[RMDB]
RNA sequence: GGGAACGACUCGAGUAGAGUCGAAAAAAUAUCGAGAAAAUAUUUGAAGUGGAAUCAACUGGAAAGUUGAACUGUAAAAAGUGAUAGUCUUGUACACGUAAGAAUAUUAAUCGUAGUAGUAUCCUGAAAGAUGAUGAUUAUUCGUAAUCAUCAUCUUAAAAGAAACAACAACAACAAC
Reactivity to 2A3 in 0.01 (KOAc 150mM, MgCl2 10mM, bicine 150mM(pH8.5), 24C), signal-to-noise 9, nucleotides 027 to 126: a000a000u130a020u050c020g000a010g010a030a300a040a010u010a010u010u030u060g040a150a010g000u000g010g000a010a010u000c000a000a010c000u010g010g010a020a020a010g000u000u010g000a010a000c000u000g010u060a070a130a040a020a020g010u010g010a010u010a010g010u000c010u010u030g000u010a000c000a000c010g010u020a010a020g010a010a010u010a000u010u020a020a030u010c020g010u010a020g010u010a010g030u020a110u040c000c010u020g060a090
Reactivity to DMS in 0.01 (KOAc 150mM, MgCl2 10mM, bicine 150mM(pH8.5), 24C), signal-to-noise 9, nucleotides 027 to 126: a070a070u010a040u010c000g010a020g000a160a080a030a000u000a000u000u010u000g000a100a230g000u000g000g000a020a020u000c000a010a000c000u000g000g040a300a020a010g000u000u000g000a000a010c010u000g020u020a010a030a100a010a010g000u000g010a030u020a040g010u000c010u000u000g000u000a290c000a010c010g000u010a090a240g000a010a010u000a000u000u000a030a270u000c010g010u000a070g020u010a060g010u010a090u000c010c010u000g010a110